[RMDB]
RNA sequence: GGGAACGACUCGAGUAGAGUCGAAAAUCAAUGGCGAGGUGGUCGCGGACACGGCCGCGGCGCUGUGCUUGCAGGAAGCCAGUUACCCUGCAGUGCAAUAUAUUCCGUUGGCCGACGUGGUACAGGAUGCCACGGUACAUUUCGAUGUACCGUGGCAAAAAGAAACAACAACAACAAC
Reactivity to 2A3 in 0.01 (KOAc 150mM, MgCl2 10mM, bicine 150mM(pH8.5), 24C), signal-to-noise 2, nucleotides 027 to 126: u090c080a000a090u170g040g040c080g040a020g000g030u060g040g020u070c040g020c010g020g000a020c050a010c080g000g000c000c000g020c000g000g000c020g000c070u020g020u040g040c000u030u170g010c020a010g000g030a040a080g020c010c040a030g040u000u070a130c060c010c000u000g000c000a000g010u000g020c000a070a000u240a000u010a080u220u170c020c000g000u050u300g040g000c030c000g030a060c090g110u070g000g050u110a000c020a030g020g040a130
Reactivity to DMS in 0.01 (KOAc 150mM, MgCl2 10mM, bicine 150mM(pH8.5), 24C), signal-to-noise 1, nucleotides 027 to 126: u010c060a020a050u080g000g000c070g000a020g040g060u000g000g020u000c000g020c040g010g030a180c070a220c070g020g000c010c000g000c000g020g000c300g020c180u050g000u040g000c010u020u040g060c010a030g000g000a070a110g000c040c020a130g020u030u030a100c110c000c000u000g010c000a000g000u010g020c010a040a260u030a120u040a130u010u000c000c000g000u000u110g040g000c000c010g010a070c070g000u000g000g010u000a050c100a030g020g000a140